The record gives the reactivity of an RNA of 177 nucleotides to 2A3 and DMS. The RNA was probed in 150 mM KOAc, 10 mM MgCl2 and 150 mM bicine (pH 8.5) at 24 C. Reactivities are given for positions 27 through 126.

RNA sequence: GGGAACGACUCGAGUAGAGUCGAAAAGAGUGUGUGCGUGCGUGUGCUGUGGCAGCGGCUUUUUUGGCUGCGCUCGGCGUGUGUGCUGUGUGUGCUUGCUGGUGCCCUGUGCUGCGGUGGGACGUCAUUAUGUAGUUUAAUUCGUUAAACUACAUAAAAAAGAAACAACAACAACAAC
Reactivity to 2A3 in 0.01 (KOAc 150mM, MgCl2 10mM, bicine 150mM(pH8.5), 24C), signal-to-noise 9, nucleotides 027 to 126: g110a020g020u090g000u020g000u040g040c040g010u040g010c030g010u080g030u040g030c030u030g030u130g090g000c040a070g010c040g030g000c000u090u080u040u030u140u290g050g000c010u030g010c010g000c010u020c010g020g000c030g000u040g010u010g020u030g020c030u020g020u010g010u010g010u040g060c020u040u040g010c020u040g020g040u050g000c000c000c020u040g030u050g020c030u020g010c020g040g010u040g020g020g020a030c020g020u020c000a010
Reactivity to DMS in 0.01 (KOAc 150mM, MgCl2 10mM, bicine 150mM(pH8.5), 24C), signal-to-noise 9, nucleotides 027 to 126: g000a070g020u010g010u010g010u010g010c050g020u010g010c040g010u010g010u010g010c030u000g020u020g010g010c030a080g040c030g010g000c020u000u010u010u020u030u020g000g010c010u000g010c030g010c030u000c040g000g000c030g010u010g010u010g020u010g010c020u000g010u010g010u010g010u010g000c040u000u010g010c040u000g010g010u010g010c040c030c030u000g010u010g010c040u000g010c060g010g020u010g000g000g000a100c080g010u010c100a120